[RMDB]
RNA sequence: GGGAACGACUCGAGUAGAGUCGAAAACAACAGCGUCGCCGCCACGAAGUACGUCGCGUGCAUCAGAAUCAUCUUUUGGAAGAGCUCCAGCGCGCCCCGCGUCUGGCCGCUGGGGGGCUCCACGCGCGCGCGUUUGGCGCGGGGGGGGUCGGCGUCACAGUAAUGUUUCUUUCGAGAAACAUUACUGAAAAGAAACAACAACAACAAC
Reactivity to 2A3 in 0.01 (KOAc 150mM, MgCl2 10mM, bicine 150mM(pH8.5), 24C), signal-to-noise 2, nucleotides 027 to 156: c000a010a010c000a050g080c030g010u030c020g050c040c030g160c040c020a100c130g090a110a020g130u120a030c030g040u040c080g080c020g000u020g000c010a030u060c010a120g210a300a050u100c060a060u000c150u150u140u140u170g150g000a260a140g030a090g020c030u010c010c000a000g000c020g000c000g000c000c010c000c000g040c000g020u020c070u030g010g010c000c000g020c010u030g010g000g000g030g110g030c040u040c050c000a070c010g010c000g010c010g020c010g030c040g010u020u060u090g010g000c000g000c000g100g010g000g010g000g000g010g020u110c020g000g010c010g050u050c050a000